RNA sequence: GGGAACGACUCGAGUAGAGUCGAAAAGCGACCCCGCGAUGACCGUCGCGAAGCUGCGGCGCUACGUGGAGGAGGGCAAGCUGCGGUACGUGCUCGUCGGCGGCGGCGUGCUGCCCGACCUGGGGUCCGUCGAGGUCACCGCGUGGGUCGUGAGGAAAUGUACUGUCUCGUUCGCGAGACAGUACAUAAAAGAAACAACAACAACAAC
Reactivity to 2A3 in 0.01 (KOAc 150mM, MgCl2 10mM, bicine 150mM(pH8.5), 24C), signal-to-noise 1, nucleotides 027 to 156: g020c000g000a010c000c000c000c000g000c000g000a000u000g000a000c020c040g300u140c020g000c060g050a060a040g080c060u120g000c000g040g000c000g020c050u030a070c060g040u150g080g020a020g030g000a040g000g070g000c070a060a180g060c010u300g300c030g060g000u120a110c020g000u040g040c010u120c100g260u030c020g040g000c010g000g000c020g040g090c060g060u180g000c000u040g040c000c000c000g080a210c000c130u040g000g000g040g000u030c070c000g010u010c020g020a010g000g020u000c000a010c000c010g000c000g000u280g000g040g000u000c000g000u020g000a030g010g230a110a220